Chemical mapping of a 177-nucleotide RNA with DMS and 2A3. The RNA was probed in 150 mM KOAc, 10 mM MgCl2 and 150 mM bicine (pH 8.5) at 24 C. For 2A3 the reverse transcriptase was SuperScript II with manganese. The data come from the RNA Mapping Database (RMDB), libraries RFM100 and RFMREP.

RNA sequence: GGGAACGACUCGAGUAGAGUCGAAAAUCAUUUCCUCAUCCCCGGGGUCCAGUUUUCCCAGGAAUCCCUUGGGCAAUCGAAAGGGGGAUUCCUGGAAAUACUGUUCUUGGGGUUGGGGCUGGACUACGUACCAUAUGGUUUUCGAACCAUAUGGUACAAAAGAAACAACAACAACAAC
Reactivity to DMS in 0.01 (KOAc 150mM, MgCl2 10mM, bicine 150mM(pH8.5), 24C), signal-to-noise 2, nucleotides 027 to 126: u020c060a070u000u020u020c000c000u000c010a010u010c010c010c000c000g000g000g000g000u040c280c010a000g010u000u000u010u000c080c000c000a010g020g000a030a010u000c010c000c010u010u010g000g020g030c140a140a120u040c150g000a090a100a220g000g000g000g030g000a010u000u010c010c010u000g000g000a000a010a000u000a000c040u000g020u020u040c010u000u010g010g010g000g030u000u000g020g000g010g020c300u010g000g000a090c070u010a070c230
Reactivity to 2A3 in 0.01 (KOAc 150mM, MgCl2 10mM, bicine 150mM(pH8.5), 24C), signal-to-noise 4, nucleotides 027 to 126: u090c030a050u060u100u110c000c000u010c000a020u030c000c000c000c010g010g010g000g070u070c070c000a010g000u000u010u020u020c030c020c000a010g010g000a000a000u000c000c000c020u040u060g110g020g020c080a110a130u170c070g170a110a030a080g050g000g000g000g010a000u000u000c000c000u010g000g010a000a000a000u130a000c000u010g010u040u030c010u040u120g010g000g000g000u000u000g010g000g000g000c040u100g010g040a060c080u100a050c160